An RNA of 207 nucleotides, treated with DMS and 2A3 and read out base by base. For 2A3, 2,000 sequencing reads were counted. Values cover nucleotides 27 to 156. The data come from the RNA Mapping Database (RMDB), library OK3TST. For 2A3 the reverse transcriptase was SuperScript II with manganese. The DMS profile rests on 2,066 reads.
RNA sequence: GGGAACGACUCGAGUAGAGUCGAAAAAGAAAACCAAACAUUGUAUCUUCUCACAAGUGGGAGCUAAGCUAUGAGGAUGCAUAUAAGAUGCUAAGCUAUGAGGAUGCAUUAUAUCAUUCUUAUGCCUAUAAGAAUGAUAUAAUGGACUCUGGGGACAGAGUCCAGCACUAUUCGUAGUGCUGGACUCAAAAGAAACAACAACAACAAC
Reactivity to DMS in 0.01 (KOAc 150mM, MgCl2 10mM, bicine 150mM(pH8.5), 24C), signal-to-noise 1, nucleotides 027 to 156: a140g000a070a040a000a160c050c000a020a120a090c060a110u000u000g010u000a060u000c070u000u010c010u000c060a090c010a050a100g020u010g000g030g020a140g050c070u010a030a110g010c020u000a110u010g010a060g020g010a030u000g010c040a060u000a140u010a070a120g000a090u000g010c030u010a040a090g010c040u000a050u010g020a040g030g040a110u010g000c030a000u000u010a000u010a000u050c000a000u000u000c020u000u000a010u000g020c160c210u000a070u020a010a010g000a060a010u000g000a010u000a000u010a000a010u010g010g020a030c110u000c040u000g040g010g030g000a140c110a100
Reactivity to 2A3 in 0.01 (KOAc 150mM, MgCl2 10mM, bicine 150mM(pH8.5), 24C), signal-to-noise 3, nucleotides 027 to 156: a020g090a010a040a000a000c070c010a050a030a030c060a090u080u060g050u110a050u060c030u080u010c040u080c020a070c040a170a130g040u080g040g040g010a030g030c070u120a090a030g000c020u050a060u080g010a000g040g010a000u040g010c020a010u050a010u020a120a090g030a040u060g000c030u030a000a070g020c020u050a070u120g020a010g050g020a050u090g080c010a000u000u030a010u000a000u020c000a000u000u000c000u010u000a020u060g300c010c060u170a030u000a010a000g000a000a000u000g000a000u000a000u000a000a000u000g000g000a010c020u000c040u040g020g000g000g010a040c050a080